The data come from the RNA Mapping Database (RMDB), library OK2TST.
This 177-nucleotide RNA was probed chemically with DMS and 2A3.
RNA sequence: GGGAACGACUCGAGUAGAGUCGAAAAUCAACAGGACCCUGGUGACCUUGCUGCGGUCGUCGAUGCUGUCCUCGUAGGUGGGUUCCUCCAGCACCGAACGGAACUUGAUCUCGGUGAAGUCCUUGAACGAUCGUGGUACGUUCGCGUACCACGAUCGAAAAGAAACAACAACAACAAC
Reactivity to DMS in 0.01 (KOAc 150mM, MgCl2 10mM, bicine 150mM(pH8.5), 24C), signal-to-noise 2, nucleotides 027 to 126: u000c080a050a110c130a010g040g000a090c040c240c050u000g040g020u020g000a070c020c000u000u020g020c110u000g010c110g020g010u000c030g020u020c040g000a080u000g000c110u000g000u000c030c020u010c090g030u000a070g000g030u010g010g000g030u000u000c010c000u020c090c020a170g000c070a060c030c020g000a130a130c140g000g000a090a070c090u020u000g010a050u000c050u000c060g000g020u000g000a150a070g000u000c030c000u000u000g030a140a150
Reactivity to 2A3 in 0.01 (KOAc 150mM, MgCl2 10mM, bicine 150mM(pH8.5), 24C), signal-to-noise 1, nucleotides 027 to 126: u040c000a050a020c020a040g060g010a070c050c000c000u070g000g000u090g000a040c000c000u030u180g080c040u090g030c050g070g000u000c020g050u030c000g010a020u140g070c100u100g000u000c000c000u040c030g000u010a020g000g080u040g030g030g000u030u000c000c000u050c030c020a010g000c010a020c020c010g030a110a000c050g010g040a050a050c000u000u140g050a050u080c030u080c040g000g050u000g030a030a020g090u100c020c000u030u080g080a090a040